[RMDB]
RNA sequence: GGGAACGACUCGAGUAGAGUCGAAAAGUGGUUAUAGUCAACCGUAUAAAAUAUCAUAUUACUUGUAUACAUAUAUUGUUCUGUUAUUGACUGAUGUGAUGCAACAUUUGAAUCAACACCUGGUGUAGCAAUUGUUAAGAUUCGUCUUAACAAUUGCAAAAGAAACAACAACAACAAC
Reactivity to DMS in 0.01 (KOAc 150mM, MgCl2 10mM, bicine 150mM(pH8.5), 24C), signal-to-noise 3, nucleotides 027 to 126: g020u010g010g000u000u000a090u000a110g010u020c080a050a070c040c030g000u000a080u000a080a060a070a100u010a080u010c010a040u020a080u010u010a110c060u000u000g000u000a060u010a100c020a070u010a090u000a110u010u000g000u000u000c070u000g000u010u000a070u010u000g000a050c020u010g000a050u000g000u000g010a060u020g000c080a050a040c100a080u000u010u000g010a070a040u000c080a070a090c080a080c030c050u000g010g020u000g010u000a200
Reactivity to 2A3 in 0.01 (KOAc 150mM, MgCl2 10mM, bicine 150mM(pH8.5), 24C), signal-to-noise 4, nucleotides 027 to 126: g040u060g050g020u060u070a100u160a170g120u100c050a020a020c030c010g020u070a140u110a230a150a040a050u120a020u100c020a010u110a070u230u140a070c020u050u050g020u030a090u050a130c000a010u150a020u070a130u210u080g050u110u000c020u030g110u200u070a160u150u090g020a020c000u010g000a020u040g010u010g030a020u040g010c010a030a050c010a060u060u070u110g070a040a050u040c010a030a070c030a050c090c040u060g110g050u110g060u050a030